[RMDB]
RNA sequence: GGGAACGACUCGAGUAGAGUCGAAAAGAUAUGGAGGAGCUUUUGACGAGCCUAUAUCGGAAACGAUAUAGCGCUCGAUAAGCUCACUCCUAAGUCAAACGUGUCAAGUCUUCGGACUUGACACGAAGGAUUUCAAUAUGUUCGCAUAUUGAAAUCCAAAAGAAACAACAACAACAAC
Reactivity to 2A3 in 0.01 (KOAc 150mM, MgCl2 10mM, bicine 150mM(pH8.5), 24C), signal-to-noise 3, nucleotides 027 to 126: g010a020u050a030u120g000g000a000g010g000a000g000c000u050u090u140u150g300a280c140g000a000g020c010c010u000a000u000a020u000c010g000g000a050a040a020c010g000a000u000a010u000a020g030c070g000c010u000c010g000a010u010a000a000g000c010u000c000a160c000u000c000c000u000a060a000g030u010c040a110a010a090c020g000u000g000u000c000a010a000g000u000c000u090u240c300g070g010a000c000u000u020g000a000c000a000c000g000a000a020
Reactivity to DMS in 0.01 (KOAc 150mM, MgCl2 10mM, bicine 150mM(pH8.5), 24C), signal-to-noise 3, nucleotides 027 to 126: g000a050u010a250u010g000g010a030g010g000a020g010c000u000u000u000u000g010a190c150g010a010g020c000c000u000a010u000a000u000c000g020g010a120a060a130c000g010a010u000a000u000a010g000c200g020c000u010c000g010a040u000a020a010g000c000u010c000a060c000u000c000c000u010a010a100g000u000c030a090a090a230c010g020u010g010u010c000a010a000g010u000c010u000u020c220g030g000a020c000u000u000g000a000c000a000c010g000a030a040
Chemical mapping of a 177-nucleotide RNA with 2A3 and DMS. 2A3 adducts were read by reverse transcription with SuperScript II with manganese. For DMS the reverse transcriptase was MarathonRT.